About this RNA: The record gives the reactivity of an RNA of 177 nucleotides to DMS and 2A3. The RNA was probed in 150 mM KOAc, 10 mM MgCl2 and 150 mM bicine (pH 8.5) at 24 C. The data come from the RNA Mapping Database (RMDB), library M2PK50.
[RMDB]
RNA sequence: GGGAACGACUCGAGUAGAGUCGAAAAGAACGCCACUUCGGUGGCGUUCGAAGAUCUUCCACACGUAGAUCACUAUCGUGUGAGACAUCGAUAGAUGUCAAAUGGUCCGGAAGUUCGCUUCCGGAAACAAAUCCGUGUAAUUCGUUACACGGAUUUGAAAAGAAACAACAACAACAAC
Reactivity to DMS in 0.01 (KOAc 150mM, MgCl2 10mM, bicine 150mM(pH8.5), 24C), signal-to-noise 7, nucleotides 027 to 126: g000a010a010c000g010c000c000a010c000u000u010c210g030g020u000g000g000c000g010u000u000c000g000a090a100g010a100u000c020u010u000c070c000a030c010a010c010g010u000a020g010a190u010c300a120c080u000a010u010c020g010u000g010u000g000a290g010a030c010a000u000c000g000a200u020a100g000a010u000g000u000c010a070a070a090u010g010g010u000c000c000g000g010a020a010g010u000u010c240g010c010u000u000c000c000g000g000a000a030a120
Reactivity to 2A3 in 0.01 (KOAc 150mM, MgCl2 10mM, bicine 150mM(pH8.5), 24C), signal-to-noise 6, nucleotides 027 to 126: g000a010a000c010g020c010c010a010c020u050u090c250g110g000u000g000g020c000g000u010u000c000g000a000a000g040a020u010c030u150u070c060c000a010c000a000c010g020u040a010g020a180u200c080a080c300u060a050u250c030g000u000g000u000g010a060g000a000c000a000u010c010g070a030u120a260g010a010u010g010u010c010a030a030a110u190g080g030u000c000c000g000g000a000a000g000u040u070c180g030c060u000u010c000c000g010g020a010a000a000